[RMDB]
RNA sequence: GGGAACGACUCGAGUAGAGUCGAAAACGAAAAAUGCACAUCUGAAAGAUAGCAACUAUUAUCAUAGGCGGGCGACAAGUCUUUUUUCUAGCAUACGAUCGGAUCAAGAGAAGUCGACUUCACUGUCGCGCACUUCAUCGUUCGCGAUGAAGUGCGCAAAAGAAACAACAACAACAAC
Reactivity to 2A3 in 0.01 (KOAc 150mM, MgCl2 10mM, bicine 150mM(pH8.5), 24C), signal-to-noise 1, nucleotides 027 to 126: c050g210a000a000a000a000a000u110g020c050a050c000a100u000c040u190g030a000a120a000g030a000u010a080g000c020a040a080c080u040a160u300u080a110u060c060a130u000a020g070g040c000g030g020g000c000g000a010c000a000a130g000u000c000u010u010u000u000u000u000c000u000a010g000c060a150u150a240c110g090a020u080c000g020g020a000u080c050a060a000g000a050g020a250a000g000u040c000g000a010c000u000u060c300a120c170u120g050u160c000